[RMDB]
Description
Chemical mapping of a 177-nucleotide RNA with 2A3 and DMS. The RNA was probed in 150 mM KOAc, 10 mM MgCl2 and 150 mM bicine (pH 8.5) at 24 C. DMS adducts were read by reverse transcription with MarathonRT.

RNA sequence: GGGAACGACUCGAGUAGAGUCGAAAAGAACUUCAUGGAUUUCACCCAACCAUGAAAUCAUACAUUGAAAGAUGGGAAACCACGCCUACUUGGGGAGAAAAUUGGAAUACAAAAGCUAAAGAAGCAACGACACUAUUAACUUCGGUUAAUAGUGUCGAAAAGAAACAACAACAACAAC
Reactivity to 2A3 in 0.01 (KOAc 150mM, MgCl2 10mM, bicine 150mM(pH8.5), 24C), signal-to-noise 2, nucleotides 027 to 126: g010a090a060c000u000u030c010a010u010g010g000a060u050u020u210c100a180c000c010c010a000a000c000c000a020u000g000a000a000a030u020c000a040u040a240c000a040u070u110g090a050a040a040g060a110u060g020g000g020a090a010a000c010c000a030c000g030c010c010u030a060c010u060u070g010g000g050g020a060g050a020a090a010a030u200u160g010g040a090a030u170a160c050a050a100a000a000g030c000u050a170a170a090g100a070a050g040c000a030a030
Reactivity to DMS in 0.01 (KOAc 150mM, MgCl2 10mM, bicine 150mM(pH8.5), 24C), signal-to-noise 2, nucleotides 027 to 126: g010a140a080c110u010u000c020a000u010g020g010a070u000u000u000c090a270c000c010c000a180a140c000c000a020u010g000a030a020a080u000c050a240u000a150c160a090u030u010g010a070a030a000g000a270u010g020g000g000a140a090a200c010c030a030c000g000c000c020u020a020c130u000u000g020g030g010g010a070g020a040a040a090a070u020u000g010g020a050a080u000a070c110a020a050a090a130g000c020u010a040a060a090g010a120a130g000c100a070a210